[RMDB]
RNA sequence: GGGAACGACUCGAGUAGAGUCGAAAACAAGAUCGAUGUGCCUCAAGCAUAUGAGCAGGGCAGGCCGAAGCUUAAUGGCCUAUCAGAUCCCAGGCUGGGCACGAUGGACAGGGCCAUCAAGUGCACAAGCUGAAUGGUUCUUCGGAACCAUUCAGCUAAAAGAAACAACAACAACAAC
Reactivity to 2A3 in 0.01 (KOAc 150mM, MgCl2 10mM, bicine 150mM(pH8.5), 24C), signal-to-noise 2, nucleotides 027 to 126: c030a000a090g040a090u070c040g020a050u050g020u040g060c000c000u100c140a110a040g000c030a040u140a170u250g080a050g010c030a050g000g070g080c020a020g030g030c000c000g050a070a030g000c030u080u110a120a030u190g010g000c000c000u030a070u090c020a050g030a100u030c000c020c020a020g080g020c050u060g020g010g000c030a010c020g000a030u010g000g020a030c170a160g000g030g060c000c000a000u000c020a090a070g000u010g010c050a050c020a160
Reactivity to DMS in 0.01 (KOAc 150mM, MgCl2 10mM, bicine 150mM(pH8.5), 24C), signal-to-noise 2, nucleotides 027 to 126: c110a080a140g010a130u000c100g010a080u000g000u000g050c000c020u000c160a120a110g010c050a100u000a150u000g000a100g010c070a140g040g000g030c050a010g000g020c010c010g000a150a120g000c180u000u000a040a110u030g000g010c000c020u000a060u000c090a060g000a110u010c000c040c030a090g000g030c040u000g000g000g000c030a030c040g000a080u010g000g000a120c100a080g000g000g010c000c010a010u000c030a050a090g030u000g000c090a090c210a060